[RMDB]
RNA sequence: GGGAACGACUCGAGUAGAGUCGAAAAAUCACCGGUGGGGAACCCCAUACGGCAACGGCGUAGAAGUAAAUGCUAACCAAUCCGUGGUAUCUACCCGACGGAGCAUCCACGGAUAACUCUAACAAGGCUAAGCGUCUCGGUUUCGACCGAGACGCAAACCUGUUACAUUCUUCGGAAUGUAACAGGUAAAAGAAACAACAACAACAAC
Reactivity to 2A3 in 0.01 (KOAc 150mM, MgCl2 10mM, bicine 150mM(pH8.5), 24C), signal-to-noise 1, nucleotides 027 to 156: a000u050c010a040c000c000g000g010u070g020g040g000g080a140a120c080c010c020c000a000u130a220c040g000g040c080a110a080c040g050g000c000g020u010a000g080a090a070g000u150a040a060a010u150g010c020u080a130a180c040c140a040a000u000c000c000g000u010g000g000u040a010u070c010u010a100c000c000c010g060a060c120g110g020a020g010c010a010u010c000c000a000c000g000g040a010u040a020a060c030u050c040u170a030a130c160a070a030g150g000c010u060a040a080g020c020g010u000c000u000c000g020g040u000u060u080c090g100a080c000c000g030a010g080a000c000g000c000a000a000